[RMDB]
Structure probing data (DMS and 2A3) for a 177-nucleotide construct. For DMS the reverse transcriptase was MarathonRT.
RNA sequence: GGGAACGACUCGAGUAGAGUCGAAAAGUUAAAUAGCACGUGAAAUUGUUGAAAGGGAAGCGCUUGCAACCAGACUCGGUCGUGGGGGCUCAGCGGGCAUGCGUGCCCGUGUACUCCCCCAUGCUCCCGUUUACCGCUAAUUCGUUAGCGGUAAACGAAAAGAAACAACAACAACAAC
Reactivity to DMS in 0.01 (KOAc 150mM, MgCl2 10mM, bicine 150mM(pH8.5), 24C), signal-to-noise 3, nucleotides 027 to 126: g020u020u020a030a060a050u060a050g040c050a030c100g020u000g010a120a140a140u020u000g000u030u000g000a100a090a150g030g010g000a110a300g010c080g030c120u000u000g000c060a070a100c060c100a100g000a080c050u020c080g050g000u010c030g020u000g000g000g020g020g010c260u010c210a260g000c010g000g000g020c010a010u000g030c110g000u000g010c000c010c010g000u000g000u010a130c280u000c010c000c000c030c000a020u000g010c090u000c030c040
Reactivity to 2A3 in 0.01 (KOAc 150mM, MgCl2 10mM, bicine 150mM(pH8.5), 24C), signal-to-noise 3, nucleotides 027 to 126: g030u040u100a040a100a080u130a080g030c030a000c110g030u060g050a020a020a160u090u070g090u030u100g010a130a040a060g020g010g010a070a040g030c030g000c140u080u150g000c010a000a070c020c000a010g020a120c040u040c130g030g000u020c020g000u010g000g000g000g000g010c020u010c070a020g010c000g000g010g000c000a000u070g050c130g130u020g000c000c000c010g000u000g000u000a030c020u040c020c000c000c000c000a000u020g000c010u010c020c020